[RMDB]
RNA sequence: GGGAACGACUCGAGUAGAGUCGAAAAGGUCCAGGUCAUCCAGGCAGCCGAGCCAAUGGCAACGGCUUACCUAUGCGGCAUACACCGUGAGCUGGUGCGCAGGCUAACAGCCGUUUUGAAACCUAACGACUGUCAGUCAUUUCGAUGACUGACAGUCAAAAGAAACAACAACAACAAC
Reactivity to 2A3 in 0.01 (KOAc 150mM, MgCl2 10mM, bicine 150mM(pH8.5), 24C), signal-to-noise 1, nucleotides 027 to 126: g030g000u000c000c000a030g040g010u020c000a030u000c020c070a020g000g070c030a020g040c000c010g040a010g010c040c040a060a130u140g020g000c050a060a080c040g020g010c000u000u050a050c000c010u090a090u190g010c020g000g030c030a070u110a220c020a010c030c000g040u020g030a030g020c080u100g030g000u020g020c040g020c030a020g030g030c040u020a010a000c000a020g010c020c000g000u020u000u050u130g010a080a030a020c020c000u000a050a010c110
Reactivity to DMS in 0.01 (KOAc 150mM, MgCl2 10mM, bicine 150mM(pH8.5), 24C), signal-to-noise 2, nucleotides 027 to 126: g000g040u000c050c050a090g010g020u010c020a060u020c060c050a110g010g020c210a070g020c060c040g000a200g030c020c070a050a090u010g000g000c010a070a050c040g010g000c010u040u000a060c050c040u000a090u000g010c040g020g040c050a080u030a250c110a080c060c100g040u010g000a110g040c090u000g010g000u000g010c020g000c030a060g010g010c090u000a060a080c210a100g010c020c020g000u000u000u000u010g000a040a170a090c060c010u010a060a100c300
Chemical mapping of a 177-nucleotide RNA with 2A3 and DMS. Conditions: 150 mM KOAc, 10 mM MgCl2 and 150 mM bicine (pH 8.5), 24 C. It was measured as part of the RMDB library OK2TRN. 2A3 adducts were read by reverse transcription with SuperScript II with manganese.